[RMDB]
The data come from the RNA Mapping Database (RMDB), library OK3TST. Structure probing data (2A3) for a 207-nucleotide construct. Conditions: 150 mM KOAc, 10 mM MgCl2 and 150 mM bicine (pH 8.5), 24 C.
RNA sequence: GGGAACGACUCGAGUAGAGUCGAAAAUGACAAGUGUCUACCCUGUACAUGGAGGAAAGGAAUGAGUACACAGAGACACAGAGAAAAAUCUGAACAAAUAGGACUUGCUAAGUUCCCCUCAGUACAUUAGGUCAUACCUGCUUUUUGUCCAGUCAUAACUAGUGGUGACGUUCGCGUCACCACUAGUAAAAGAAACAACAACAACAAC
Reactivity to 2A3 in 0.01 (KOAc 150mM, MgCl2 10mM, bicine 150mM(pH8.5), 24C), signal-to-noise 2, nucleotides 027 to 156: u200g030a050c110a160a050g020u030g030u110c000u070a080c040c030c000u040g010u020a040c060a110u150g070g040a050g060g030a140a000a060g030g090a080a040u060g010a020g040u030a020c020a020c000a100g030a010g010a040c010a000c030a120g050a020g000a110a120a000a020a060u030c030u040g040a100a050c070a090a080a040u110a130g080g030a030c010u040u110g070c070u110a120a050g060u020u080c000c000c000c000u000c020a030g070u060a020c010a060u110u150a030g000g010u020c010a050u090a140c010c000u030g020c070u170u030u050u080u120g030u070c040c010a030g030u070c060a040u130a180